Structure probing data (DMS and 2A3) for a 177-nucleotide construct. DMS (dimethyl sulfate) methylates the pairing face of unpaired adenines and cytosines. The 2A3 profile rests on 2,052 reads.
[RMDB]
RNA sequence: GGGAACGACUCGAGUAGAGUCGAAAAGCCUCACAAGAAGCCCAAGGAUAUCUGCCUGCUCUGACUCCCACUCUGAGAUGGCUGCCCUCCCUUUUCCUUGGCCAUGCCUUCCUGCUGCAGGGCUCUGCACUGUAUCAAGCUUCGGCUUGAUACAGUGAAAAGAAACAACAACAACAAC
Reactivity to DMS in 0.01 (KOAc 150mM, MgCl2 10mM, bicine 150mM(pH8.5), 24C), signal-to-noise 4, nucleotides 027 to 126: g010c020c010u000c110a090c120a130a110g000a110a080g010c070c010c020a090a090g010g010a090u000a060u000c080u010g010c040c010u000g010c030u000c030u010g010a080c070u010c020c010c030a090c160u000c050u000g000a090g010a100u010g000g000c040u000g000c020c010c010u000c020c010c010u000u000u000u000c010c020u000u010g010g010c070c080a060u000g000c060c030u000u000c010c020u000g010c070u010g010c070a070g000g020g000c050u010c060u000g010
Reactivity to 2A3 in 0.01 (KOAc 150mM, MgCl2 10mM, bicine 150mM(pH8.5), 24C), signal-to-noise 1, nucleotides 027 to 126: g010c010c000u040c000a120c050a050a060g120a060a010g020c010c010c020a020a030g040g010a040u040a040u120c060u050g060c020c000u050g050c000u000c010u010g040a070c020u030c030c000c020a060c020u050c030u030g040a060g040a100u100g050g020c020u090g090c020c000c020u030c000c010c000u010u030u010u020c010c020u040u040g000g000c000c000a020u040g010c010c000u020u030c000c000u040g030c010u020g010c020a020g000g030g000c010u000c000u030g000

For 2A3 the reverse transcriptase was SuperScript II with manganese. The DMS profile rests on 4,616 reads.